[RMDB]
RNA sequence: GGGAACGACUCGAGUAGAGUCGAAAAGCACGUCCGGAAAGCCCCGUGCGAACACUUGAGCUCCGGCUUGUCCGCUCUUGUGGAUUAGGACGUUCUAGCUCCGGCUUGGCCGCUAGUUCGUCCGAAAAUUUAUGCAGGGUUUCGACCCUGCAUAAAUAAAAGAAACAACAACAACAAC
Reactivity to 2A3 in 0.01 (KOAc 150mM, MgCl2 10mM, bicine 150mM(pH8.5), 24C), signal-to-noise 7, nucleotides 027 to 126: g020c000a000c020g040u060c050c020g070g050a130a080a050g070c000c000c020c000g010u030g010c030g020a110a010c030a010c030u020u040g010a000g000c020u090c130c060g040g030c050u150u190g060u070c010c010g020c000u020c000u010u020g020u030g030g040a040u050u190a050g010g000a000c000g010u000u000c000u000a010g000c030u040c080c020g100g060c120u150u300g140g010c040c050g000c030u000a000g020u000u000c000g000u000c000c000g000a000a010a000
Reactivity to DMS in 0.01 (KOAc 150mM, MgCl2 10mM, bicine 150mM(pH8.5), 24C), signal-to-noise 6, nucleotides 027 to 126: g010c030a010c020g000u020c020c020g020g010a080a180a170g000c010c010c020c020g010u010g020c020g030a110a150c030a020c030u000u000g000a050g020c070u030c300c140g000g000c040u030u010g000u020c030c040g000c020u000c030u000u000g010u010g000g000a160u020u020a070g010g000a010c010g010u000u000c000u000a010g010c030u020c090c030g000g020c090u050u010g000g000c170c130g000c010u000a000g000u000u000c020g000u010c000c000g000a020a030a050